Conditions: 150 mM KOAc, 10 mM MgCl2 and 150 mM bicine (pH 8.5), 24 C.
Structure probing data (DMS and 2A3) for a 207-nucleotide construct.
It was measured as part of the RMDB library RFM130.
DMS adducts were read by reverse transcription with MarathonRT.
For 2A3, 8,288 sequencing reads were counted.
RNA sequence: GGGAACGACUCGAGUAGAGUCGAAAACGCUUUGCGAAUUCACAGGCCCUAUCUUGUGGUAUGAACUGAGUACGCGAUGAUUUAUGGCGCAUAUUGGGGGCUUACCAAAAGAUAAUGCUGUGAAUUUGCAAAGCGCAAAGAAUGGUUCGCCAUUCAAGUUUAGAUACGAGUUCGCUCGUAUCUAAACAAAAGAAACAACAACAACAAC
Reactivity to DMS in 0.01 (KOAc 150mM, MgCl2 10mM, bicine 150mM(pH8.5), 24C), signal-to-noise 1, nucleotides 027 to 156: c020g000c010u020u010u010g020c000g000a030a020u000u000c000a020c000a060g030g060c260c130c060u010a020u000c010u030u000g010u000g010g010u010a000u000g020a140a130c040u000g010a160g030u000a020c020g040c000g040a100u010g000a270u000u000u000a120u010g010g040c010g010c010a040u000a090u000u010g030g010g050g040g030c070u000u000a030c000c010a000a020a020a020g010a060u010a010a080u000g040c020u000g030u000g000a040a060u000u010u000g000c000a020a000a020g000c000g000c030a060a050a090g000a040a030u000g010g000u000u020c170g000c010c020a040u000u010c020a030a300
Reactivity to 2A3 in 0.01 (KOAc 150mM, MgCl2 10mM, bicine 150mM(pH8.5), 24C), signal-to-noise 7, nucleotides 027 to 156: c010g000c010u000u000u000g000c000g000a000a000u000u000c000a010c010a030g120g060c010c020c000u010a010u000c000u020u050g040u040g030g000u000a010u020g020a050a030c040u060g050a020g030u050a030c030g020c020g070a060u090g090a130u080u180u210a190u300g190g000c010g000c040a030u060a110u120u100g110g010g000g010g000c000u010u000a000c000c000a030a070a020a000g000a000u010a030a030u090g010c000u000g000u000g000a000a000u000u000u010g000c000a000a000a000g000c000g000c000a010a020a010g000a000a000u000g010g010u040u050c120g020c060c000a000u000u010c010a020a000